[RMDB]
RNA sequence: GGGAACGACUCGAGUAGAGUCGAAAACAUGACCUGUUCGCAGGUCAUGAAAGUGGACGAGGAGCGAUGAACCCACACAAAACAAGACAUCGCAAAAUUAAAAAAGCAAGUGCUUCGGCACUUGCAAGUCAUAUUAUAAGUUCGCUUAUAAUAUGACAAAAGAAACAACAACAACAAC
Reactivity to DMS in 0.01 (KOAc 150mM, MgCl2 10mM, bicine 150mM(pH8.5), 24C), signal-to-noise 4, nucleotides 027 to 126: c010a000u000g000a000c000c000u000g020u000u010c200g030c000a010g000g010u000c000a010u010g010a030a070a100g010u000g010g000a110c100g010a130g000g000a120g010c000g010a000u000g000a140a080c070c000c000a020c030a140c140a050a030a070a060c090a040a050g010a160c020a000u000c020g030c010a130a050a070a110u010u020a010a040a050a080a090a080g000c000a020a000g010u000g000c000u010u020c210g010g000c000a010c000u000u000g010c000a020a040
Reactivity to 2A3 in 0.01 (KOAc 150mM, MgCl2 10mM, bicine 150mM(pH8.5), 24C), signal-to-noise 6, nucleotides 027 to 126: c010a000u000g000a000c000c000u000g020u030u050c180g020c070a000g000g000u000c000a000u000g000a000a010a010g010u020g010g020a020c070g040a100g120g100a170g050c010g000a010u000g020a070a100c000c040c000a010c010a000c020a010a110a020a020c060a020a020g100a040c000a010u000c000g010c010a030a030a040a070u140u130a060a060a010a020a000a010g000c000a000a000g000u010g000c000u060u130c220g080g000c000a000c000u000u000g000c000a000a000